Structure probing data (DMS and 2A3) for a 177-nucleotide construct. The DMS profile rests on 4,309 reads. For 2A3, 5,866 sequencing reads were counted. Conditions: 150 mM KOAc, 10 mM MgCl2 and 150 mM bicine (pH 8.5), 24 C.
[RMDB]
RNA sequence: GGGAACGACUCGAGUAGAGUCGAAAAAGAUAUGGACUGUACCGAAAGCUGAACUACCUUCGGGACUCUUCGGAAACGAAGAGUUCUCUAGCGUGAGGCAGCUAGUAGCUGUACAGUCCUAAGUCAAUCAAGAACUACUGUUCGCAGUAGUUCUUGAAAAAGAAACAACAACAACAAC
Reactivity to DMS in 0.01 (KOAc 150mM, MgCl2 10mM, bicine 150mM(pH8.5), 24C), signal-to-noise 4, nucleotides 027 to 126: a090g010a050u010a300u010g010g010a030c010u000g000u010a000c000c040g010a130a220a200g010c000u000g000a050a050c020u000a070c020c010u000u000c220g010g000g000a000c000u010c000u000u000c000g010g010a110a060a230c000g010a010a010g010a010g010u000u000c000u000c080u000a020g040c200g020u000g010a040g000g000c000a020g000c000u020a050g010u000a110g020c220u020g010u000a010c000a000g000u000c000c000u000a010a070g000u010c050a130a190
Reactivity to 2A3 in 0.01 (KOAc 150mM, MgCl2 10mM, bicine 150mM(pH8.5), 24C), signal-to-noise 2, nucleotides 027 to 126: a000g040a030u060a030u060g010g010a000c000u010g000u000a000c000c040g050a120a070a000g020c000u000g020a120a090c020u050a040c160c010u030u080c040g010g020g000a010c010u010c000u020u000c020g050g010a060a040a040c010g010a020a010g000a020g010u050u010c000u010c010u000a070g010c110g190u240g100a050g050g030c010a000g000c000u000a040g050u070a010g000c150u120g000u010a020c010a010g000u000c020c000u010a010a000g000u000c000a020a110